[RMDB]
RNA sequence: GGGAACGACUCGAGUAGAGUCGAAAAGUACACCCUCCCUCCCUCCCAAAAGCGCGCAAAUAAAGGGAGGGACUGAGGGAUGAGUAGGCCAAAAGGCCAUAUCCCGAAGACGCGCGACGGGACAAAAGGAUACAAGAAGUUUCGACUUCUUGUAUCCAAAAGAAACAACAACAACAAC
Reactivity to 2A3 in 0.01 (KOAc 150mM, MgCl2 10mM, bicine 150mM(pH8.5), 24C), signal-to-noise 2, nucleotides 027 to 126: g030u060a040c020a090c080c000c000u030c000c020c000u010c030c000c000u030c000c010c000a030a150a060a020g030c010g000c010g000c050a030a110a050u200a110a130a020g000g000g000a000g000g000g000a000c000u010g010a010g010g030g000a000u040g020a030g150u290a170g020g000c020c020a100a300a190a260g000g000c000c000a030u060a020u080c010c000c000g000a060a010g050a010c020g000c010g000c010g030a020c000g010g010g030a020c050a020a100a040a090
Reactivity to DMS in 0.01 (KOAc 150mM, MgCl2 10mM, bicine 150mM(pH8.5), 24C), signal-to-noise 3, nucleotides 027 to 126: g010u010a150c150a100c000c010c010u000c000c000c030u000c000c000c000u020c020c000c000a060a080a100a180g020c020g010c010g040c010a080a070a140u020a040a090a150g010g000g000a010g010g000g000a010c020u010g000a070g000g000g000a030u000g000a120g020u010a150g030g000c000c010a030a100a120a150g010g010c000c000a060u000a060u000c000c000c000g000a140a080g000a110c120g010c000g010c000g010a150c160g000g000g030a040c180a020a020a100a130
Source: RMDB library M2PK90, as collected in RNAgym. This 177-nucleotide RNA was probed chemically with 2A3 and DMS. The reactions ran in a buffer of 150 mM KOAc, 10 mM MgCl2 and 150 mM bicine (pH 8.5), at 24 C. For 2A3, 3,647 sequencing reads were counted. For 2A3 the reverse transcriptase was SuperScript II with manganese.